[RMDB]
RNA sequence: GGGAACGACUCGAGUAGAGUCGAAAAGAACUUGUCACUAUUGCAAUUAAGUUGACCUUGAAAACCAGGGCUUGGUUAUUAUCUCGCAUGGAAUCCAUCUUACAGAUACCAAGUUAUAGUGGAUUCAUCUGUAUACCUGAUUCGUCAGGUAUACAGAAAAAGAAACAACAACAACAAC
Reactivity to DMS in 0.01 (KOAc 150mM, MgCl2 10mM, bicine 150mM(pH8.5), 24C), signal-to-noise 6, nucleotides 027 to 126: g000a080a080c080u000u010g010u000c040a050c090u000a090u000u000g010c110a060a090u010u010a050a080g020u010u000g010a080c030c050u000u010g000a070a070a090a120c110c050a050g000g000g010c010u000u000g010g010u010u010a070u020u010a050u010c020u000c090g020c290a070u000g010g010a070a080u000c060c020a030u010c070u010u000a070c120a070g000a080u010a070c050c050a020a040g000u010u000a040u020a120g010u000g010g010a060u010u000c020a100
Reactivity to 2A3 in 0.01 (KOAc 150mM, MgCl2 10mM, bicine 150mM(pH8.5), 24C), signal-to-noise 5, nucleotides 027 to 126: g040a030a050c050u050u090g030u050c010a020c070u090a090u130u230g000c040a070a070u130u090a190a080g070u050u070g050a030c020c000u060u090g020a100a100a030a020c030c010a020g030g020g040c030u030u010g010g010u040u040a050u110u080a060u030c070u030c070g050c120a060u120g070g020a090a040u030c020c000a030u020c030u070u120a070c030a030g060a080u060a050c010c010a050a000g010u040u030a120u050a030g050u010g000g010a030u010u040c010a050